Chemical mapping of a 177-nucleotide RNA with DMS and 2A3.
For 2A3 the reverse transcriptase was SuperScript II with manganese.
The reactions ran in a buffer of 150 mM KOAc, 10 mM MgCl2 and 150 mM bicine (pH 8.5), at 24 C.
For DMS, 12,237 sequencing reads were counted.

[RMDB]
RNA sequence: GGGAACGACUCGAGUAGAGUCGAAAAGACUACAGAUGGCACGGCACCACGCCCAACUAAUUUUUGUAUUUUCAGUAGAGAUGGAGUUUCACCAUAUUGAUCAGGCAGGUCUCAAACUCCUGACCUCAUAGUAUCACUUGUUCGCAAGUGAUACUAUAAAAGAAACAACAACAACAAC
Reactivity to DMS in 0.01 (KOAc 150mM, MgCl2 10mM, bicine 150mM(pH8.5), 24C), signal-to-noise 8, nucleotides 027 to 126: g010a140c050u000a070c090a070g020a090u010g010g010c040a060c090g000g000c040a070c050c040a070c110g010c010c010c040a070a100c110u040a040a050u000u000u000u000u000g000u000a070u000u000u000u000c050a080g020u000a060g000a050g010a060u010g010g000a040g020u010u000u000c050a070c020c020a060u000a120u000u000g000a040u010c050a030g010g000c090a040g000g000u000c040u010c120a040a040a060c050u000c000c000u000g000a170c050c020u010c140
Reactivity to 2A3 in 0.01 (KOAc 150mM, MgCl2 10mM, bicine 150mM(pH8.5), 24C), signal-to-noise 5, nucleotides 027 to 126: g030a020c040u050a050c070a010g070a130u070g040g010c040a010c070g040g000c030a010c040c000a020c040g000c010c020c010a040a020c020u090a060a180u050u070u050u070u130g090u080a120u030u070u010u070c070a050g030u070a020g080a010g000a030u020g020g010a030g030u000u040u080c040a050c020c000a020u060a080u170u170g060a080u080c000a010g040g060c040a010g050g000u020c040u010c060a050a070a030c010u010c000c000u020g050a090c010c000u040c010